This 207-nucleotide RNA was probed chemically with DMS and 2A3.
Conditions: 150 mM KOAc, 10 mM MgCl2 and 150 mM bicine (pH 8.5), 24 C.
Values cover nucleotides 27 to 156.
For DMS, 1,650 sequencing reads were counted.
As a SHAPE reagent, 2A3 marks flexible, mostly unpaired nucleotides at the ribose 2'-OH.
The 2A3 profile rests on 1,087 reads.
2A3 adducts were read by reverse transcription with SuperScript II with manganese.

RNA sequence: GGGAACGACUCGAGUAGAGUCGAAAAAGCUCAAGAAGAAUUUUGUUCCAACAAUCAUUAUUGUUGACUAUCUGGGUAUUUGUAAAUCUUGUCGCAUCAGAGUUUACUCAGAAAAUAGUUACACAACUGUUAAAGCUAUUGCAGAGGAAUUGCGUGCCGUUAACAUUACGUUCGCGUAAUGUUAACGAAAAGAAACAACAACAACAAC
Reactivity to DMS in 0.01 (KOAc 150mM, MgCl2 10mM, bicine 150mM(pH8.5), 24C), signal-to-noise 1, nucleotides 027 to 156: a050g010c030u000c030a020a130g000a140a130g010a110a080u000u040u010u000g010u000u000c030c020a130a090c080a090a090u000c040a100u010u000a120u000u000g030u000u010g020a090c030u000a040u010c070u000g010g040g000u000a010u000u000u020g020u000a030a060a130u000c020u000u000g000u010c110g060c000a150u000c060a180g020a140g030u000u000u010a040c030u000c010a000g000a060a070a130a120u010a020g010u000u010a100c200a110c060a030a080c070u000g000u010u030a030a120a110g000c040u000a040u000u010g000c030a120g000a120g060g000a110a050u010u000g000c070g000u010g030c000
Reactivity to 2A3 in 0.01 (KOAc 150mM, MgCl2 10mM, bicine 150mM(pH8.5), 24C), signal-to-noise 3, nucleotides 027 to 156: a000g030c030u040c070a070a040g080a060a040g040a070a080u190u250u170u300g020u120u030c040c000a020a040c020a060a090u180c120a090u110u300a030u150u050g010u000u020g010a040c010u030a080u130c040u040g010g020g030u040a090u070u110u050g090u080a040a080a080u050c020u060u060g050u060c020g000c030a050u090c030a040g040a030g150u020u080u030a110c000u000c030a000g070a040a050a010a020u070a000g030u040u080a110c100a000c010a090a300c100u130g050u140u130a130a050a030g020c010u020a040u080u090g010c060a040g000a000g070g070a070a060u060u090g070c030g020u020g000c030